[RMDB]
RNA sequence: GGGAACGACUCGAGUAGAGUCGAAAAAGGAGUUGAGCAAGGUGACUCUGUCCACAUUGGAAUGUCGUGUUUCGCCGAUCAAUGAUUCAAAAUUGACAAUUAACUGGUUGAAAGAUGGCAAACCACUCGCGGAAGCUUCCCGUUUCAAGCCAUCAUGCGAAUUCGGUUUCGUGACGUUGGAUAUUCUCUAUGCACUUCCGGAAGACAGUGGCGUUUAUGAGUGUGUUGCUAUGAAUGAUAAAGGCGAAGCAUCCACGAACUCAUGUCUGGUCGGGUUCGCCCGACCAAAAAGAAACAACAACAACAAC
Reactivity to 2A3 in 0.01 (KOAc 150mM, MgCl2 10mM, bicine 150mM(pH8.5), 24C), signal-to-noise 2, nucleotides 027 to 266: a040g050g020a020g000u080u070g020a030g040c100a100a020g060g040u050g060a040c000u030c020u070g050u010c000c000a110c030a100u070u120g020g030a050a010u070g020u040c040g040u040g040u000u000u010c000g000c000c010g010a000u070c030a050a120u030g020a100u150u130c080a070a070a040a070u100u080g010a020c000a020a070u070u070a180a160c060u220g110g090u070u120g060a050a040a020g140a050u070g010g000c020a020a020a050c020c000a000c000u000c000g000c000g000g040a050a090g050c050u130u060c000c000c010g020u050u060u120c090a060a000g000c010c000a030u180c030a050u070g110c070g070a080a110u030u000c030g040g010u030u000u040c040g000u010g150a190c100g080u110u160g000g000a050u050a110u300u120c040u020c000u050a040u080g050c050a000c000u030u000c000c000g000g040a010a050g020a020c000a020g000u000g010g000c030g030u060u120u110a130u190g000a000g000u050g010u020g020u040u030g000c010u010a030u130g040a130a100u090g030a060u040a100a060a040g000g000c000g020a000a010g000c000a000u030c000c020a020c010g040a060a030c040u090c090a030u120g160u150c040
Reactivity to DMS in 0.01 (KOAc 150mM, MgCl2 10mM, bicine 150mM(pH8.5), 24C), signal-to-noise 4, nucleotides 027 to 266: a080g000g000a030g010u010u010g000a130g030c130a060a100g010g010u010g020a010c020u010c050u000g010u000c020c020a070c100a080u010u030g000g000a080a120u010g010u020c180g000u000g010u000u000u000c000g020c000c000g000a110u030c100a060a050u000g000a080u010u000c060a060a050a110a090u010u010g000a100c050a060a060u020u020a090a190c260u020g010g020u010u000g010a100a060a130g010a090u010g000g010c000a020a040a070c030c000a010c040u000c030g000c130g010g000a050a090g020c090u000u000c100c050c020g010u010u000u000c070a110a150g000c010c000a010u010c080a070u000g010c030g000a230a180u000u000c040g000g000u000u000u010c110g000u000g000a080c060g000u000u010g020g010a040u020a120u010u020c090u010c020u000a050u010g010c000a020c010u000u000c010c010g020g000a020a050g000a220c030a040g010u000g000g000c020g010u000u010u010a070u030g010a020g020u000g000u000g000u000u000g000c010u000a060u010g000a050a030u000g000a050u000a050a160a170g020g020c020g000a020a020g000c030a050u000c130c160a050c040g000a070a120c050u000c080a030u000g000u010c130